[RMDB]
RNA sequence: GGGAACGACUCGAGUAGAGUCGAAAAGCUAUACCGUUCGCGGUAUAGCAAAAUCUUUCGGAGAUGUACUAAUACGAGCCUAUUAGUCAACGGUUCGAGUCCAAACGGGUUACUUCGGUAACCCGAAUCUAAGUAUUGUCUUCGGACAAUACUUAGAAAAAGAAACAACAACAACAAC
Reactivity to 2A3 in 0.01 (KOAc 150mM, MgCl2 10mM, bicine 150mM(pH8.5), 24C), signal-to-noise 4, nucleotides 027 to 126: g000c000u010a000u020a000c010c000g020u020u060c250g000c010g090g010u000a010u000a000g000c000a010a010a000a000u020c000u020u130u040c020g050g010a090g040a110u100g100u250a020c010u020a020a030u030a050c120g140a060g100c020c020u040a040u050u030a030g050u060c040a060a050c040g010g030u010u010c010g010a010g040u000c030c000a050a080a060c010g010g010g000u000u000a000c010u020u070c210g070g000u010a020a000c000c000c000g000a000a000
Reactivity to DMS in 0.01 (KOAc 150mM, MgCl2 10mM, bicine 150mM(pH8.5), 24C), signal-to-noise 5, nucleotides 027 to 126: g000c000u000a010u010a010c000c000g030u000u010c220g040c010g010g010u000a000u010a000g010c010a020a030a050a070u000c110u000u010u010c020g020g000a040g000a090u000g000u010a000c000u000a010a010u000a030c070g010a130g010c210c180u000a020u000u000a020g010u000c020a070a030c020g000g000u000u000c010g000a040g010u010c040c060a040a090a220c020g010g000g000u010u000a000c000u000u010c160g020g000u000a000a000c000c000c000g010a010a020